[RMDB]
RNA sequence: GGGAACGACUCGAGUAGAGUCGAAAAGUGAUGAUAAUAAUGUACUCAAUACAUGGUACUGUGGCUAGUCUGACACACUGUAACCACUCAAUAAAGCUUAGCCAUUAGCCUGAGCAACAAAGUGAGACCGACAUACCCGAUUCGUCGGGUAUGUCGGAAAAGAAACAACAACAACAAC
Reactivity to 2A3 in 0.01 (KOAc 150mM, MgCl2 10mM, bicine 150mM(pH8.5), 24C), signal-to-noise 1, nucleotides 027 to 126: g080u040g040a100u050g000a030u100a200a020u120a060a030u140g010u020a030c010u000c110a090a000u130a140c150a060u120g030g020u060a010c050u030g050u060g020g020c010u000a060g080u030c050u040g050a000c010a010c000a000c080u000g010u070a040a030c000c000a040c040u110c020a000a060u070a080a020a000g030c000u020u030a020g000c020c020a110u000u150a020g000c000c000u020g020a000g000c010a010a070c040a070a060a060g060u070g080a040g030a100
Reactivity to DMS in 0.01 (KOAc 150mM, MgCl2 10mM, bicine 150mM(pH8.5), 24C), signal-to-noise 1, nucleotides 027 to 126: g050u000g010a070u000g020a080u010a050a120u020a080a070u000g020u000a040c020u000c130a070a130u000a080c100a100u000g000g010u000a060c140u040g040u000g000g000c010u000a050g000u000c020u000g030a090c090a020c020a060c030u000g020u020a070a140c060c040a120c060u010c060a030a060u030a060a150a100g020c100u000u000a030g020c030c030a030u020u000a070g030c140c040u030g000a040g010c030a000a070c140a040a040a090g020u000g020a060g000a150
Structure probing data (2A3 and DMS) for a 177-nucleotide construct. Values cover nucleotides 27 to 126. For 2A3, 727 sequencing reads were counted. DMS adducts were read by reverse transcription with MarathonRT. 2A3 is a SHAPE reagent: it acylates the 2'-hydroxyl of flexible nucleotides of all four kinds. Conditions: 150 mM KOAc, 10 mM MgCl2 and 150 mM bicine (pH 8.5), 24 C. It was measured as part of the RMDB library OK2TRN.